[RMDB]
RNA sequence: GGGAACGACUCGAGUAGAGUCGAAAAGCGUGACACCAUCGCCAAACCGCCCCCCAGCGGAAGUCCCGGGUUGAUGAUCGCCAUGGGCCCAGGCUUCUGUUCCGAACUCGUGUUGCUGCGCUGGCACCGCACUCCCAAUUUUCGAAUUGGGAGUGCGAAAAGAAACAACAACAACAAC
Reactivity to DMS in 0.01 (KOAc 150mM, MgCl2 10mM, bicine 150mM(pH8.5), 24C), signal-to-noise 1, nucleotides 027 to 126: g040c060g050u010g070a110c080a070c070c000a070u000c080g000c070c040a040a070a180c080c070g000c010c030c000c020c020c010a100g010c020g000g000a040a010g010u020c010c000c050g030g000g000u000u020g010a030u000g030a240u020c170g020c190c020a020u000g020g010g000c000c000c010a080g000g000c010u010u000c020u000g020u000u000c050c070g000a040a060c110u010c060g000u020g010u020u000g010c040u020g020c060g010c030u010g000g010c000a080c090